[RMDB]
Conditions: 150 mM KOAc, 10 mM MgCl2 and 150 mM bicine (pH 8.5), 24 C.
Chemical mapping of a 207-nucleotide RNA with 2A3 and DMS.
For DMS the reverse transcriptase was MarathonRT.
In probing experiments dimethyl sulfate is read out at A N1 and C N3, which are open when not base-paired.
RNA sequence: GGGAACGACUCGAGUAGAGUCGAAAAAUGCACACGAAGUUGCAUAUGGGAAUAACGUGCCGGAUGUAUAUGAUGAUACAGAGACGUUCUUCGAUUUAACAUAUCCAACAUCUGGUGUCACGGGUGUUAUCGAAGCGGUUGCUCAACGUGUGAUUGCCAAGUCACACAUCUUCGGAUGUGUGACUUGAAAAGAAACAACAACAACAAC
Reactivity to 2A3 in 0.01 (KOAc 150mM, MgCl2 10mM, bicine 150mM(pH8.5), 24C), signal-to-noise 3, nucleotides 027 to 156: a000u130g000c010a010c020a010c040g120a130a080g080u180u120g050c040a000u060a100u200g040g010g110a080a100u200a110a040c100g020u080g170c050c000g080g070a030u080g050u030a070u020a070u170g150a070u050g020a000u020a070c030a030g060a020g020a010c040g070u050u050c010u010u030c010g020a050u100u090u130a050a040c030a030u050a070u110c050c050a060a020c010a040u020c080u170g070g090u080g030u060c060a040c120g040g020g000u010g010u020u110a020u030c030g020a020a000g020c010g050g050u060u050g000c050u020c040a010a050c030g020u030g000u010g040a080u050u050g040c030
Reactivity to DMS in 0.01 (KOAc 150mM, MgCl2 10mM, bicine 150mM(pH8.5), 24C), signal-to-noise 2, nucleotides 027 to 156: a050u000g000c000a050c010a180c060g050a150a230g020u000u000g040c020a120u010a060u000g020g010g000a190a070u000a070a050c060g000u000g020c050c010g030g020a170u000g030u000a020u000a110u010g040a180u010g020a140u010a060c030a100g000a170g000a120c070g000u000u010c040u020u000c000g000a110u000u000u000a120a020c030a040u000a060u010c040c020a040a080c030a090u000c090u020g040g010u010g000u000c040a080c080g000g020g020u000g000u000u000a080u000c010g010a030a080g010c130g000g000u000u000g040c000u020c030a040a070c100g030u000g020u000g000a300u000u000g020c140